[RMDB]
RNA sequence: GGGAACGACUCGAGUAGAGUCGAAAAGUUUUGCUUCGGCAAAACCGUCGACCUUUGUGGUAACUACGUAUGGGAGCUCGAAGAACCCAUUGGGUUCUAAGAGCGAAGAACAUACGGUCAGUUACCACUCUGGUGCAGUUGAUCUUUCGAGAUCAAACAAAGCAAGGUUGUUCGCAACCUUGCUUUGAAAAGAAACAACAACAACAAC
Reactivity to 2A3 in 0.01 (KOAc 150mM, MgCl2 10mM, bicine 150mM(pH8.5), 24C), signal-to-noise 1, nucleotides 027 to 156: g000u000u000u000u050g020c000u050u150c290g210g000c000a010a010a000a060c000c020g240u120c040g120a000c000c000u010u010u000g010u000g000g020u000a000a000c000u020a020c000g000u000a000u000g030g010g030a030g000c000u010c010g050a080a030g000a030a000c030c010c030a200u120u300g000g010g000u000u000c010u030a050a000g010a000g000c000g000a010a000g000a010a000c010a000u010a000c020g020g040u070c030a000g000u000u000a000c010c010a000c000u000c000u010g000g010u040g070c030a140g000u090u050g020a000u010c010u060u160u150c230g100a020g010a020u030c010a010a000a010
Reactivity to DMS in 0.01 (KOAc 150mM, MgCl2 10mM, bicine 150mM(pH8.5), 24C), signal-to-noise 1, nucleotides 027 to 156: g000u010u000u000u000g020c010u000u040c300g040g010c000a000a000a000a030c020c010g010u010c040g010a060c010c000u010u000u000g040u000g010g020u000a010a000c000u000a030c010g010u010a030u000g000g000g040a300g020c050u000c000g020a300a010g010a030a010c000c000c010a300u000u020g040g090g010u000u010c000u020a020a300g010a020g020c010g000a020a140g000a200a110c020a030u000a000c000g030g000u010c020a010g020u000u000a000c000c000a010c010u010c060u000g000g000u010g000c040a040g020u000u000g000a020u000c010u000u020u000c280g000a030g000a010u000c010a030a060a300
Overview
An RNA of 207 nucleotides, treated with 2A3 and DMS and read out base by base. Conditions: 150 mM KOAc, 10 mM MgCl2 and 150 mM bicine (pH 8.5), 24 C. For DMS, 2,395 sequencing reads were counted. DMS adducts were read by reverse transcription with MarathonRT.